[RMDB]
RNA sequence: GGGAACGACUCGAGUAGAGUCGAAAAGGUCCGUGGACCAUCAGACGCUGAACAGAUUUUAAGAUGAUUUAGAGCGGCCUGUAUAGCUGAUACAAGUUUGCCCAUUUGAUGGAGGGAGAGCAGACGCGUGAACCACCGGACGCUGACAUGGGGUUAAAACUAGUCUCGUAUUCGUACGAGACUAGUUAAAAGAAACAACAACAACAAC
Reactivity to 2A3 in 0.01 (KOAc 150mM, MgCl2 10mM, bicine 150mM(pH8.5), 24C), signal-to-noise 3, nucleotides 027 to 156: g070g000u030c030c010g040u090g060g000a070c100c000a040u060c030a020g070a130c060g000c020u060g020a050a020c050a070g060a170u120u080u050u170a140a040g050a090u160g030a060u030u070u200a130g010a020g030c030g000g030c010c000u030g050u050a080u110a080g010c030u030g040a030u060a120c010a040a070g020u020u070u110g040c000c010c030a030u090u030u110g110a140u100g000g060a020g000g030g010a050g000a000g000c030a020g000a030c060g020c020g000u010g040a040a060c010c000a020c030c040g000g000a010c030g050c090u040g010a010c030a060u050g010g000g010g110u070u160a030a210
Reactivity to DMS in 0.01 (KOAc 150mM, MgCl2 10mM, bicine 150mM(pH8.5), 24C), signal-to-noise 1, nucleotides 027 to 156: g020g030u000c020c040g050u000g030g010a080c020c030a200u000c020a100g010a080c050g040c050u000g010a080a140c080a140g020a150u000u000u000u000a070a160g000a140u000g010a130u000u000u000a070g030a080g000c010g030g020c030c010u000g000u000a070u040a130g000c130u000g000a260u000a030c070a020a050g020u000u010u000g030c040c020c010a230u010u000u000g000a080u010g010g010a160g010g020g010a100g000a090g030c010a050g030a080c000g000c010g060u010g000a080a080c010c010a040c060c010g000g010a140c070g000c050u000g020a060c030a110u010g000g020g040g000u000u010a010a040
This 207-nucleotide RNA was probed chemically with 2A3 and DMS. Reactivities are given for positions 27 through 156. For DMS, 2,037 sequencing reads were counted. For 2A3 the reverse transcriptase was SuperScript II with manganese. Source: RMDB library OK3TST, as collected in RNAgym. Values are in units of 0.01, from 0 to 300, in steps of 10. The reactions ran in a buffer of 150 mM KOAc, 10 mM MgCl2 and 150 mM bicine (pH 8.5), at 24 C.